[RMDB]
This 207-nucleotide RNA was probed chemically with DMS and 2A3. It was measured as part of the RMDB library M2RFPK. The 2A3 profile rests on 5,406 reads. The reactions ran in a buffer of 150 mM KOAc, 10 mM MgCl2 and 150 mM bicine (pH 8.5), at 24 C. Values are in units of 0.01, from 0 to 300, in steps of 10.
RNA sequence: GGGAACGACUCGAGUAGAGUCGAAAAGUGAACGAUCUCGGUUGUUUCUCUGAAGGCAUGAUCACCCCGUCCGAUGCGGAAGUUCGUGCUUCCGUCGAACGCGAAAGUCGGACGGCGGCCCUGAGUCAAUAUGUUUAAGGCUUCGGCCUUAAACAAAGAUGACUAUGUUAUUCGUAACAUAGUCAUCAAAAGAAACAACAACAACAAC
Reactivity to DMS in 0.01 (KOAc 150mM, MgCl2 10mM, bicine 150mM(pH8.5), 24C), signal-to-noise 2, nucleotides 027 to 156: g030u010g020a060a080c020g010a040u000c010u000c010g010g020u000u000g010u000u010u000c030u010c040u010g000a140a110g030g030c040a120u000g010a110u000c080a120c000c030c000c000g020u000c000c020g010a040u000g020c010g010g020a000a030g050u000u010c250g030u000g000c030u000u000c000c020g000u000c050g000a060a160c110g000c060g030a110a080a140g030u010c020g000g020a050c000g000g000c050g000g010c020c030c050u010g000a160g000u000c080a080a130u010a120u000g000u000u000u000a000a010g000g010c000u000u000c300g070g000c000c010u000u000a000a010a020c010a040a050a090
Reactivity to 2A3 in 0.01 (KOAc 150mM, MgCl2 10mM, bicine 150mM(pH8.5), 24C), signal-to-noise 6, nucleotides 027 to 156: g140u110g060a090a030c090g020a090u040c040u060c160g060g000u010u010g010u010u050u000c040u000c030u050g130a190a080g060g000c090a080u110g020a040u130c040a070c020c000c000c010g000u000c000c000g000a010u030g010c000g000g010a010a010g010u150u300c170g140u300g070c000u000u000c000c000g000u010c000g090a150a070c080g010c040g160a080a060a020g030u000c000g000g000a000c000g000g010c020g010g000c000c010c000u040g020a030g020u030c020a040a080u070a080u250g000u000u000u010a000a000g000g000c010u030u050c240g080g000c000c010u000u000a000a000a000c000a010a010a000